[RMDB]
RNA sequence: GGGAACGACUCGAGUAGAGUCGAAAAUACAUAUCCCAGGCUAAUUUCAUCCUGGCCUACCAGUUCCGUCCAGAUGGUGCCAGCUUGAACCGUCAGCCUCUGGGAGUCUGCUGGGCAUGAUGAGGACCUUGCAAUGCGCAUUCGUGCGCAUUGCAAGAAAAGAAACAACAACAACAAC
Reactivity to DMS in 0.01 (KOAc 150mM, MgCl2 10mM, bicine 150mM(pH8.5), 24C), signal-to-noise 1, nucleotides 027 to 126: u010a180c190a140u000a210u010c000c010c000a020g040g000c060u020a010a170u000u000u000c010a010u010c080c020u000g010g020c000c050u010a060c160c010a020g000u010u000c010c170g030u010c140c030a090g020a060u000g010g030u000g020c000c000a050g020c000u010u000g010a060a070c300c140g000u010c110a060g000c000c020u000c110u000g000g020g010a130g000u000c070u000g030c100u000g000g000g070c040a040u010g020a090u010g000a040g050g000a100c110